[RMDB]
RNA sequence: GGGAACGACUCGAGUAGAGUCGAAAAUUGUAUAUGGAUGUUUUGUUAAAUCUUUGUUGACACAGAAUACAUAAUUUCCUUUUUCUGUUUGUGUGAGAAGUAAAGAUUGAACAAAAAUAUGUGAGUGAAUCAGAGGGGGAUUCGUCCCCCUCUGAUUAAAAGAAACAACAACAACAAC
Reactivity to DMS in 0.01 (KOAc 150mM, MgCl2 10mM, bicine 150mM(pH8.5), 24C), signal-to-noise 1, nucleotides 027 to 126: u000u000g010u000a090u020a130u000g010g000a090u000g010u000u000u010u000g000u000u000a060a010a010u000c000u000u000u000g010u000u000g020a300c000a010c000a060g000a080a060u010a040c030a020u000a020a080u000u010u050c130c150u010u010u000u010u030c100u020g010u000u000u010g000u000g000u000g010a120g000a270a050g000u000a020a010a030g000a010u000u000g010a020a020c010a010a030a030a080a020u010a050u000g000u000g000a080g020u000g000